[RMDB]
This 177-nucleotide RNA was probed chemically with DMS and 2A3. The DMS profile rests on 5,747 reads. Reactivities are given for positions 27 through 126. The RNA was probed in 150 mM KOAc, 10 mM MgCl2 and 150 mM bicine (pH 8.5) at 24 C. For 2A3, 13,102 sequencing reads were counted.

RNA sequence: GGGAACGACUCGAGUAGAGUCGAAAAUAAUGCCACUUCGGUGGCAUUAGCAGGUACCAAAGCCCUAUCAAGUACAAAAUCCCAAACAACAAGAUAGGCAAAUAAUGCAUAGCUUCGGCUAUGCAAACCAAAAUACUGUAUUCGUACAGUAUUUUGGAAAAGAAACAACAACAACAAC
Reactivity to DMS in 0.01 (KOAc 150mM, MgCl2 10mM, bicine 150mM(pH8.5), 24C), signal-to-noise 6, nucleotides 027 to 126: u000a010a010u000g010c000c000a010c000u000u010c180g020g020u000g000g010c000a000u000u000a010g000c190a100g020g010u000a030c080c300a060a090a110g000c160c010c010u000a010u000c010a050a170g000u000a020c070a060a070a130a070u010c000c000c000a060a090a080c140a050a030c050a110a150g000a010u000a010g010g010c040a130a070a070u020a060a080u000g010c000a010u000a000g000c000u000u010c210g020g010c000u000a000u000g000c000a000a050a130
Reactivity to 2A3 in 0.01 (KOAc 150mM, MgCl2 10mM, bicine 150mM(pH8.5), 24C), signal-to-noise 4, nucleotides 027 to 126: u020a000a000u010g000c000c000a000c010u040u060c220g130g000u010g030g000c000a000u010u000a000g000c020a020g060g100u050a040c030c030a100a080a020g050c020c000c000u010a010u020c020a070a040g010u010a060c030a050a120a030a110u030c020c010c000a040a100a060c070a040a020c010a050a000g000a020u010a000g010g000c000a000a010a010u150a040a050u050g000c000a000u000a000g000c000u070u040c290g080g000c000u010a000u000g000c000a000a000a000